[RMDB]
RNA sequence: GGGAACGACUCGAGUAGAGUCGAAAAUUUGGCAAUUAGAUUUGUUUGAGAUGUCUACGGAAAGAUGGCAGGGACGGUGGGUCUACCUGACGUACCAGAACAACAUAGAAUACGCCUACACGGUAACGAUGCGCGUAGUGUUCGCACUACGCGCAUCAAAAGAAACAACAACAACAAC
Reactivity to 2A3 in 0.01 (KOAc 150mM, MgCl2 10mM, bicine 150mM(pH8.5), 24C), signal-to-noise 1, nucleotides 027 to 126: u040u000u000g060g000c060a080a080u100u000a030g120a300u000u000u130g030u030u000u060g090a060g000a000u050g000u000c000u000a050c000g060g060a110a000a000g300a270u170g000g000c000a040g100g000g110a050c060g020g070u210g000g040g000u080c000u080a300c080c030u060g000a060c000g080u000a030c080c000a050g000a060a030c050a020a020c000a000u000a000g160a000a000u240a130c190g000c000c000u190a140c190a000c000g180g000u100a100a000c100
Chemical mapping of a 177-nucleotide RNA with 2A3. 2A3 is a SHAPE reagent: it acylates the 2'-hydroxyl of flexible nucleotides of all four kinds.